RNA sequence: GGGAACGACUCGAGUAGAGUCGAAAAACACAAAGUAGCAAGCGAACUUGCUGAUAAACUUGGUCAAAUAUAUGACGUCACGUUUAAUCAGGCAGAAAUUGCUUUCAUUACUAUCCAUUUACGUGGACAACGCGAUCGUAUUCGUACGAUCGCGUUGAAAAGAAACAACAACAACAAC
Reactivity to DMS in 0.01 (KOAc 150mM, MgCl2 10mM, bicine 150mM(pH8.5), 24C), signal-to-noise 2, nucleotides 027 to 126: a060c080a090c250a080a050a030g000u000a020g000c170a020a000g000c030g000a010a090c130u010u000g000c010u000g000a030u000a020a010a000c010u010u000g000g010u000c000a000a060a110u010a170u000a080u000g010a020c040g000u000c010a060c120g000u010u000u000a050a090u000c020a030g040g000c020a010g000a080a060a120u000u030g000c000u000u000u000c060a050u000u000a060c020u010a080u000c020c040a050u000u000u010a100c280g000u000g010g020a130
Reactivity to 2A3 in 0.01 (KOAc 150mM, MgCl2 10mM, bicine 150mM(pH8.5), 24C), signal-to-noise 2, nucleotides 027 to 126: a000c060a000c030a030a120a000g030u000a020g040c030a010a000g000c000g040a030a080c020u060u130g000c000u020g000a010u000a000a000a000c010u040u080g010g000u030c020a020a160a060u300a050u040a110u230g020a010c000g100u180c020a000c020g010u000u020u000a210a130u040c000a020g180g000c010a000g040a040a120a050u010u050g010c000u030u040u040c010a030u040u080a010c000u080a070u010c010c000a030u120u200u160a110c170g020u000g000g000a010

Conditions: 150 mM KOAc, 10 mM MgCl2 and 150 mM bicine (pH 8.5), 24 C. Structure probing data (DMS and 2A3) for a 177-nucleotide construct. The DMS profile rests on 1,099 reads.